[RMDB]
RNA sequence: GGGAACGACUCGAGUAGAGUCGAAAAUUGCCUGGAAAAGUGGGCGCGGGACGGCGUCUUGUUACUAAACACGACCCUGACCGUCAAGCGCGGGGCGGCGGCGUCCCACUCUAGAAUCGGUUGGGACGCUGUGUACCAUGUUCGCAUGGUACACAGCAAAAGAAACAACAACAACAAC
Reactivity to 2A3 in 0.01 (KOAc 150mM, MgCl2 10mM, bicine 150mM(pH8.5), 24C), signal-to-noise 6, nucleotides 027 to 126: u140u100g100c030c010u070g120g000a110a170a000a010g130u180g010g010g000c050g000c040g000g040g040a010c020g010g010c030g020u000c000u000u010g000u000u080a190c220u180a070a090a020c030a010c060g060a070c010c010c050u070g100a130c030c000g010u040c020a050a040g000c030g000c010g040g020g000g000c030g020g010c030g020g020c010g020u060c010c000c000a030c010u030c020u060a150g120a220a130u130c090g000g000u040u010g020g000g020a020c030
Reactivity to DMS in 0.01 (KOAc 150mM, MgCl2 10mM, bicine 150mM(pH8.5), 24C), signal-to-noise 3, nucleotides 027 to 126: u020u040g010c000c010u000g010g000a090a100a120a090g010u000g010g020g020c110g010c020g020g000g000a120c090g010g000c150g010u000c000u000u010g000u000u010a130c300u020a040a020a040c000a000c050g020a020c030c250c080u020g010a220c010c010g000u000c060a070a070g000c050g030c000g010g010g000g000c050g010g010c070g000g010c000g000u010c000c000c000a010c010u000c060u000a080g020a120a150u030c120g000g000u010u000g030g000g030a050c020